[RMDB]
RNA sequence: GGGAACGACUCGAGUAGAGUCGAAAAAGGAAUGAUCAUGUCAGGAUCCCAAACCAGCACCUGAUAGUCUCUGUGCCACAGCAGAAACAGCAUUUGUCUAAGAAGAUCCCACACAUGAGACAGGUGAAAGGAUGUUCCAAGUGACAGCUUGUGAAGAAAAUAAUCGGGUGUUCGCACCCGAUUAUUUAAAAGAAACAACAACAACAAC
Reactivity to 2A3 in 0.01 (KOAc 150mM, MgCl2 10mM, bicine 150mM(pH8.5), 24C), signal-to-noise 1, nucleotides 027 to 156: a000g150g000a100a070u170g000a010u080c010a040u100g020u040c000a000g010g020a010u030c000c010c000a080a030a040c050c000a010g050c030a000c030c000u010g030a080u010a060g020u040c010u000c010u030g030u030g000c010c010a050c000a050g000c010a050g050a090a100a040c030a020g030c000a010u080u050u050g060u000c040u060a080a100g050a060a000g000a150u030c000c020c000a010c000a010c000a030u150g030a050g020a070c010a000g050g000u010g010a130a020a070g000g000a040u090g010u100u000c030c010a030a020g000u000g150a040c030a030g080c080u050u040g130u050g090a190a150g060a010
Reactivity to DMS in 0.01 (KOAc 150mM, MgCl2 10mM, bicine 150mM(pH8.5), 24C), signal-to-noise 2, nucleotides 027 to 156: a080g000g000a100a070u030g010a100u000c030a090u010g020u000c020a050g020g000a190u010c020c000c010a060a100a190c070c050a090g000c070a070c030c000u010g070a120u000a070g020u000c020u000c010u010g000u000g020c010c090a150c130a240g050c060a070g010a070a020a020c030a140g000c000a230u000u000u020g040u020c040u000a040a140g010a070a070g040a100u000c000c000c010a160c060a050c020a120u010g020a170g000a080c040a040g030g000u000g010a040a100a120g000g040a050u000g000u000u010c000c010a030a150g030u000g010a100c040a070g040c070u000u010g010u000g000a090a150g000a120
Chemical mapping of a 207-nucleotide RNA with 2A3 and DMS. Reactivities are rounded to 0.1 and cut off at 0 and 3. Source: RMDB library OK3TST, as collected in RNAgym. For DMS the reverse transcriptase was MarathonRT. For DMS, 2,070 sequencing reads were counted.